[RMDB]
RNA sequence: GGGAACGACUCGAGUAGAGUCGAAAACGUGCAAUAUGCCAGUGCAGCCCAUGCUCGUCGCGCAUCCAUGAAGGCAUCGAGGGCACUACAUAACGAAAGGUGCUGGCGCCGUCCUUCACUGCUAAAAUAUUUAUUAUAGUUUCGACUAUAAUAAAUAAAAAGAAACAACAACAACAAC
Reactivity to DMS in 0.01 (KOAc 150mM, MgCl2 10mM, bicine 150mM(pH8.5), 24C), signal-to-noise 7, nucleotides 027 to 126: c110g030u020g010c060a080a080u040a040u030g010c020c030a080g010u020g020c050a080g000c030c010c020a120u020g010c010u000c050g000u010c040g000c110g010c060a070u020c070c070a100u010g000a080a040g000g020c050a080u010c060g010a090g020g010g010c020a040c020u010a090c110a090u030a100a110c180g000a080a120a120g010g000u000g000c010u000g000g000c040g000c050c040g000u020c010c010u000u010c030a080c110u000g000c040u010a060a050a060a100
Reactivity to 2A3 in 0.01 (KOAc 150mM, MgCl2 10mM, bicine 150mM(pH8.5), 24C), signal-to-noise 9, nucleotides 027 to 126: c040g060u100g020c010a070a120u080a090u300g030c020c010a040g020u030g050c030a030g030c010c000c010a010u050g010c020u030c050g090u040c030g030c010g010c050a050u030c040c000a060u130g080a070a050g030g000c010a030u050c050g030a090g010g030g030c030a010c020u110a030c020a140u240a230a060c090g130a180a040a040g050g000u030g010c010u020g040g000c020g000c010c010g050u080c000c000u040u070c030a050c070u090g020c030u110a030a040a100a150

The record gives the reactivity of an RNA of 177 nucleotides to DMS and 2A3. For DMS, 18,735 sequencing reads were counted. For DMS the reverse transcriptase was MarathonRT. Values cover nucleotides 27 to 126. Values are in units of 0.01, from 0 to 300, in steps of 10.